[RMDB]
RNA sequence: GGGAACGACUCGAGUAGAGUCGAAAAGAAACAACUGAAGCUUCAACGCCUUUUUUUCCAAUCUUCUUUAGCACCGGGCUAGGGAGUAAGCCCGUGGAACCUUAGUUUUGUUCCCUCGGGACAUACUUGUGGUUCCUGUGGUGCACUCCUGACCCUGACAGAGAUUAAACUUCGGUUUAAUCUCUGUAAAAGAAACAACAACAACAAC
Reactivity to 2A3 in 0.01 (KOAc 150mM, MgCl2 10mM, bicine 150mM(pH8.5), 24C), signal-to-noise 3, nucleotides 027 to 156: g000a000a050a010c090a020a050c090u130g070a200a020g040c020u190u180c090a100a060c060g010c030c010u070u070u020u060u010u100u060c030c060a100a210u040c030u160u030c000u040u150u120a130g070c060a050c150c040g000g040g010c040u070a050g030g030g010a000g000u040a070a020g020c050c000c000g010u030g000g000a000a000c000c000u030u030a030g000u040u220u150u210g060u150u090c010c000c000u100c150g070g000g000a000c000a000u010a000c000u030u010g080u130g150g000u000u000c000c000u020g110u260g000g010u060g000c050a010c000u000c000c000u020g060a100c000c020c000u010g010

This 207-nucleotide RNA was probed chemically with 2A3. Values cover nucleotides 27 to 156.